[RMDB]
RNA sequence: GGGAACGACUCGAGUAGAGUCGAAAAGGUAUCUAAUCAGCAUGAGUAAAUAACCAGCUCUAAGGAGGAUGUGAUAUACCACCCAGUGUGAGGACUGCUGGGUAUGGCAGUGGUUCUUACACUGAAUCAUGCUCUGGAGUCACUUGGAGGCUUAUUACCUCAUUAAUGAGUUCGCUCAUUAAUGAGGAAAAGAAACAACAACAACAAC
Reactivity to DMS in 0.01 (KOAc 150mM, MgCl2 10mM, bicine 150mM(pH8.5), 24C), signal-to-noise 2, nucleotides 027 to 156: g020g040u000a070u000c060u000a090a110u000c040a080g000c030a070u000g010a100g020u000a050a080a110u000a080a150c050c040a130g000c040u000c020u010a100a100g030g020a120g000g010a060u010g000u000g010a170u000a130u000a080c060c040a140c020c040c000a020g020u000g010u010g010a020g020g000a030c000u000g010c000u000g020g030g040u000a020u000g010g010c010a030g000u000g030g020u000u000c050u000u000a030c020a030c030u000g010a030a040u000c000a030u000g000c000u000c010u000g000g020a140g010u010c040a050c040u020u010g000g020a120g000g000c030u000u000a070u010u000a170
Reactivity to 2A3 in 0.01 (KOAc 150mM, MgCl2 10mM, bicine 150mM(pH8.5), 24C), signal-to-noise 5, nucleotides 027 to 156: g040g010u050a040u060c070u170a100a030u070c050a010g050c010a040u070g030a060g170u200a070a150a140u110a070a100c020c020a030g020c000u020c010u030a090a100g090g010a010g030g010a050u040g030u080g100a040u030a010u030a190c010c040a030c010c030c000a000g000u000g000u010g010a000g000g000a000c000u010g030c010u010g020g110g120u180a120u150g110g020c000a010g010u010g000g000u000u000c000u000u000a000c010a000c000u000g000a000a020u050c000a010u030g000c020u000c020u050g070g000a050g040u050c010a020c100u060u100g040g010a010g040g000c000u060u010a040u120u130a150

About this RNA: An RNA of 207 nucleotides, treated with DMS and 2A3 and read out base by base. DMS adducts were read by reverse transcription with MarathonRT. The reactions ran in a buffer of 150 mM KOAc, 10 mM MgCl2 and 150 mM bicine (pH 8.5), at 24 C. For 2A3, 3,256 sequencing reads were counted.